An RNA of 207 nucleotides, treated with 2A3 and read out base by base. Source: RMDB library VIROID, as collected in RNAgym. Conditions: 150 mM KOAc, 10 mM MgCl2 and 150 mM bicine (pH 8.5), 24 C. Reactivities are given for positions 27 through 156. For 2A3 the reverse transcriptase was SuperScript II with manganese.

[RMDB]
RNA sequence: GGGAACGACUCGAGUAGAGUCGAAAACCUGAUCUCCCUCGCUCUUUUUCUUUGACGCAGCGGCGGGUGGGUUCCCAGGGUAAAACACAAUAGGUGUUUCCCGGUAAACACCGUGCGGUUCCUGUGGUUCGCCCCGCCAACGCAGAUAGAUAAAGAAUCUAGUUAAAAGGUUCGCCUUUUAACUAGAAAAAGAAACAACAACAACAAC
Reactivity to 2A3 in 0.01 (KOAc 150mM, MgCl2 10mM, bicine 150mM(pH8.5), 24C), signal-to-noise 2, nucleotides 027 to 156: c010c010u040g160a140u050c030u030c030c010c010u030c040g070c020u040c000u000u020u020u070u000c050u110u180u070g030a040c050g010c010a010g000c010g080g000c040g040g040g040u270g040g090g010u060u080c010c010c020a000g040g000g010u140a050a060a100a000c070a000c030a110a230u230a300g010g090u000g010u000u010u060c020c030c020g010g020u100a040a040a000c000a010c010c020g080u090g050c090g050g000u040u040c000c000u030g050u200g080g000u010u010c010g130c020c000c010c000g030c010c000a000a000c000g010c010a000g000a010u010a000g010a010u070a040a060a000g010a010a050